[RMDB]
RNA sequence: GGGAACGACUCGAGUAGAGUCGAAAAAGGGCAGGGUGAAAUUCCCGAUCGGCGGUAAAGUCCGCGAGCCGAACGAAAAAGGUUUGGCAGGAACCGGGGAGAUUCCGGUACCGACAGUAUAGUCUGGAUGACCACUUCAGCUUCGGCUGAAGUGGAACUCCAUAGAUAGGUUCGCCUAUCUAUGGAGAAAAGAAACAACAACAACAAC
Reactivity to 2A3 in 0.01 (KOAc 150mM, MgCl2 10mM, bicine 150mM(pH8.5), 24C), signal-to-noise 2, nucleotides 027 to 156: a030g090g050g070c090a050g010g010g000u020g010a030a030a030u010u010c000c000c000g000a010u020c030g010g000c000g010g000u040a020a020a030g020u010c000c000g010c010g010a010g000c020c010g010a000a000c010g090a110a030a100a040a040g060g000u000u010u010g020g010c000a000g000g030a010a010c010c010g000g020g010g030a100g000a010u060u020c010c010g000g010u000a010c000c010g010a000c010a000g030u040a010u070a060g010u020c020u000g020g030a030u060g040a020c010c000a010c000u010u010c000a000g000c010u060u170c280g100g010c000u010g000a010a000g000u000g000g000a000a010
Reactivity to DMS in 0.01 (KOAc 150mM, MgCl2 10mM, bicine 150mM(pH8.5), 24C), signal-to-noise 1, nucleotides 027 to 156: a070g000g020g040c040a110g030g060g030u000g000a050a130a230u010u000c030c000c000g000a080u000c040g040g020c000g000g000u030a040a100a120g020u010c010c000g010c030g010a240g010c020c020g060a040a150c030g010a050a120a140a100a210g000g010u000u000u000g000g040c000a100g000g010a080a050c000c020g020g000g010g010a230g010a300u000u010c010c010g000g020u000a020c010c010g010a040c010a050g010u000a210u000a090g000u000c050u000g010g010a160u010g000a160c000c010a010c010u000u000c000a000g000c010u010u000c300g050g040c000u020g000a020a030g010u000g030g000a010a040